The record gives the reactivity of an RNA of 177 nucleotides to DMS and 2A3. 2A3 is a SHAPE reagent: it acylates the 2'-hydroxyl of flexible nucleotides of all four kinds. 2A3 adducts were read by reverse transcription with SuperScript II with manganese.
[RMDB]
RNA sequence: GGGAACGACUCGAGUAGAGUCGAAAAUAAAAGCGGCAACCAACGCAGCAGAGGGAUGCAACCCAAGAAGCGGAAGGAGACGCAACUCCAAACCACGAAAGUGGAGCGAAAGCAAGCCGCAAAAAAAGUAGAGUUAACUGUUCGCAGUUAACUCUACAAAAGAAACAACAACAACAAC
Reactivity to DMS in 0.01 (KOAc 150mM, MgCl2 10mM, bicine 150mM(pH8.5), 24C), signal-to-noise 1, nucleotides 027 to 126: u020a090a060a090a090g010c000g050g000c000a200a110c150c000a080a290c130g010c000a100g000c040a060g010a150g000g000g000a090u000g010c300a160a170c000c000c000a090a170g000a090a160g020c000g020g000a130a180g000g010a100g010a120c140g050c160a090a170c010u030c010c060a080a140a100c000c000a040c040g010a010a020a140g000u000g000g000a080g020c040g000a070a010a150g000c000a060a080g000c000c030g010c000a000a000a050a060a020a060a150
Reactivity to 2A3 in 0.01 (KOAc 150mM, MgCl2 10mM, bicine 150mM(pH8.5), 24C), signal-to-noise 1, nucleotides 027 to 126: u070a010a090a000a050g000c000g040g000c030a040a010c020c000a020a020c020g000c040a040g050c010a020g040a060g010g030g000a020u210g130c030a100a130c020c000c010a040a010g120a040a010g020c040g020g050a040a030g050g000a040g010a030c050g000c140a030a040c020u000c010c000a000a010a080c010c000a000c000g060a080a070a000g030u010g000g000a010g020c030g050a090a040a000g030c000a060a000g000c000c000g000c000a140a000a000a000a030a000a000
The DMS profile rests on 836 reads.
The reactions ran in a buffer of 150 mM KOAc, 10 mM MgCl2 and 150 mM bicine (pH 8.5), at 24 C.